[RMDB]
RNA sequence: GGGAACGACUCGAGUAGAGUCGAAAAGAUAUGGACCGUUUGUCAGGAUGGCUGCUCUCGGAAACGAGAGAACUACAGCCAGCCUUGGAUUUAACGGUCCUAAGUCAAACGUCAGUUCGCUGACGAAUCCCCUUAUGUAGUUCGCUACAUAAGGGGAAAAAGAAACAACAACAACAAC
Reactivity to DMS in 0.01 (KOAc 150mM, MgCl2 10mM, bicine 150mM(pH8.5), 24C), signal-to-noise 4, nucleotides 027 to 126: g000a030u000a300u000g000g000a020c000c000g020u000u000u000g010u010c000a020g000g000a080u000g010g000c000u000g000c000u000c000u010c000g010g010a100a100a230c000g010a020g000a030g000a040a030c060u020a300c010a000g000c000c000a010g000c030c000u000u010g020g010a020u000u010u010a010a010c000g010g000u000c000c000u000a000a060g020u010c020a110a130a190c030g010u000c000a010g020u000u020c260g020c000u000g010a010c010g000a100a120
Reactivity to 2A3 in 0.01 (KOAc 150mM, MgCl2 10mM, bicine 150mM(pH8.5), 24C), signal-to-noise 5, nucleotides 027 to 126: g020a020u080a020u120g010g000a000c010c000g000u010u010u020g020u020c010a010g020g010a030u010g000g000c000u010g000c000u000c000u010c000g030g020a100a080a040c010g000a000g010a000g000a020a010c060u210a050c010a010g000c000c000a010g000c010c000u020u140g150g010a040u300u300u240a010a000c000g000g000u000c000c000u000a010a000g000u000c020a070a020a050c010g010u000c000a010g010u050u190c280g040c150u010g010a000c000g010a010a100